[RMDB]
Structure probing data (2A3 and DMS) for a 177-nucleotide construct. For 2A3, 1,887 sequencing reads were counted. 2A3 adducts were read by reverse transcription with SuperScript II with manganese. The RNA was probed in 150 mM KOAc, 10 mM MgCl2 and 150 mM bicine (pH 8.5) at 24 C.

RNA sequence: GGGAACGACUCGAGUAGAGUCGAAAAGAUAUGGAUAGUGAACAGUGUUCAGGCGUUGAAAUCGGAAACGAUGGAGCCUGACACUACCCACUAUCCUAAGUCGACGAUGAAAGUUCGCUUUCAUCAACGACAGAACCAUGUUCGCAUGGUUCUGUCGAAAAGAAACAACAACAACAAC
Reactivity to 2A3 in 0.01 (KOAc 150mM, MgCl2 10mM, bicine 150mM(pH8.5), 24C), signal-to-noise 1, nucleotides 027 to 126: g000a000u040a040u130g000g000a000u000a000g000u010g040a060a080c060a100g020u040g070u260u160c010a010g000g000c040g300u300u140g000a040a020a040u020c020g020g000a110a000a060c000g000a000u000g000g000a020g010c000c020u000g000a010c000a000c000u010a000c000c000c000a000c010u020a000u000c000c000u000a040a010g010u040c000g010a050c090g000a000u000g030a000a000a000g000u130u200c300g090c080u020u010u000c000a000u000c010a000a040
Reactivity to DMS in 0.01 (KOAc 150mM, MgCl2 10mM, bicine 150mM(pH8.5), 24C), signal-to-noise 1, nucleotides 027 to 126: g010a050u010a300u000g000g010a000u000a000g000u010g010a080a300c100a030g010u000g000u010u010c000a000g010g010c020g000u000u010g000a080a160a010u000c010g000g020a110a070a130c010g000a000u000g000g010a060g010c010c000u000g000a020c010a030c000u000a050c230c060c000a020c000u000a030u000c000c010u000a010a070g000u000c000g030a110c300g000a010u000g010a010a000a000g000u000u020c280g010c040u000u000u000c010a000u000c010a060a160